[RMDB]
RNA sequence: GGGAACGACUCGAGUAGAGUCGAAAAGGUUCGGAGUGCCGAUGGGGUUUGGCGGCCCGCAUGCCGGGUACCUUGCGGUGCACGCCAAGCAUGCGCGUCAGCUGCCCGGCCGGCUGGUCGGUGUGUCCGCAAAAAUACCAUUCGUGGUAUUUUUGCGAAAAGAAACAACAACAACAAC
Reactivity to 2A3 in 0.01 (KOAc 150mM, MgCl2 10mM, bicine 150mM(pH8.5), 24C), signal-to-noise 1, nucleotides 027 to 126: g070g000u050u090c040g030g030a070g050u070g080c070c020g020a040u020g060g040g000g000u000u000u140g010g000c000g000g010c000c000c000g010c010a020u030g020c030c030g070g030g010u020a040c000c010u060u150g060c050g040g000u110g040c080a060c180g040c030c020a000a000g020c010a010u110g050c040g010c030g070u070c030a010g020c020u000g020c030c020c000g010g000c000c010g020g130c080u100g050g020u050c020g010g030u060g000u020g020u020c030
Reactivity to DMS in 0.01 (KOAc 150mM, MgCl2 10mM, bicine 150mM(pH8.5), 24C), signal-to-noise 3, nucleotides 027 to 126: g010g010u000u000c030g010g010a130g030u000g010c020c020g010a060u000g010g010g020g010u000u010u000g020g010c020g010g000c010c020c020g010c010a030u000g010c050c060g000g010g020u010a020c100c030u010u020g010c130g010g000u010g000c020a090c040g000c270c070a020a060g010c030a040u000g010c010g020c160g010u010c090a090g010c050u000g000c030c010c020g000g020c010c030g000g010c060u010g000g010u000c020g010g010u010g000u010g010u010c050